[RMDB]
RNA sequence: GGGAACGACUCGAGUAGAGUCGAAAAGCCAUGUGACUUUUGUCGCAUGGCGACGACGGAGUUUUCUCCGUCGGAUAUCCGCCAUCCGUUUGCCCGGGAUGGCCUAUCUGCCGAACAUGCUUUUUAGCUUGUGAGGUAGUUAGUGCUAGGGGCGUCACGGCCAUCGUAUAUUCGUAUACGAUGGCCGAAAAGAAACAACAACAACAAC
Reactivity to 2A3 in 0.01 (KOAc 150mM, MgCl2 10mM, bicine 150mM(pH8.5), 24C), signal-to-noise 2, nucleotides 027 to 156: g000c000c000a000u000g010u020g020a050c070u080u010u260u300g000u000c000g000c000a000u000g000g000c010g010a010c020g000a000c000g010g030a020g040u140u090u300u090c000u000c020c000g060u000c000g000g020a060u080a050u040c000c020g000c010c000a020u020c000c010g030u090u100u120g020c000c000c000g010g000g000a000u000g000g010c000c000u000a000u000c000u000g000c010c000g030a020a010c000a010u010g040c000u210u080u000u100u300a010g000c010u000u070g000u040g010a000g000g000u000a000g000u000u000a000g000u000g010c010u100a070g020g000g000g060c030g070u030c050a050
An RNA of 207 nucleotides, treated with 2A3 and read out base by base. The reactions ran in a buffer of 150 mM KOAc, 10 mM MgCl2 and 150 mM bicine (pH 8.5), at 24 C.